[RMDB]
RNA sequence: GGGAACGACUCGAGUAGAGUCGAAAAAUCACGCAGCCUCGCCUUGACACUGCUCAAGGGAUAAGGGGAAGGAGCUGAGAUAGAACUGAGUUGGAGCGUUGCAGCGGCACGAGCAGUGAAAAGAGCGGCCUACUCAUUAGUUCGCUAAUGAGUAGGCAAAAGAAACAACAACAACAAC
Reactivity to 2A3 in 0.01 (KOAc 150mM, MgCl2 10mM, bicine 150mM(pH8.5), 24C), signal-to-noise 2, nucleotides 027 to 126: a000u160c090a090c080g040c020a010g130c000c000u010c000g020c030c030u030u000g000a020c020a060c110u030g060c010u000c020a050a040g070g000g000a080u010a190a100g050g000g000g020a030a000g070g050a050g020c020u010g000a030g040a070u070a070g020a100a090c220u220g000a070g100u060u090g020g000a000g050c090g020u030u120g000c030a000g030c020g030g000c010a000c060g020a000g020c010a000g000u050g030a110a000a000a000g140a000g040c040g000
Reactivity to DMS in 0.01 (KOAc 150mM, MgCl2 10mM, bicine 150mM(pH8.5), 24C), signal-to-noise 3, nucleotides 027 to 126: a030u030c060a100c150g000c090a220g000c000c040u010c030g010c020c010u000u030g020a210c030a050c050u000g000c040u000c000a070a040g020g010g000a060u030a060a110g000g000g020g010a050a060g020g030a120g010c000u020g000a080g000a120u020a050g010a140a110c070u000g000a090g010u020u020g000g020a080g020c070g000u000u010g000c060a070g000c110g020g020c100a060c130g010a030g000c030a020g000u000g010a030a090a020a020g010a150g000c060g000
Structure probing data (2A3 and DMS) for a 177-nucleotide construct.
For 2A3, 749 sequencing reads were counted.
Source: RMDB library OK1LIB, as collected in RNAgym.
Reactivities are rounded to 0.1 and cut off at 0 and 3.
The RNA was probed in 150 mM KOAc, 10 mM MgCl2 and 150 mM bicine (pH 8.5) at 24 C.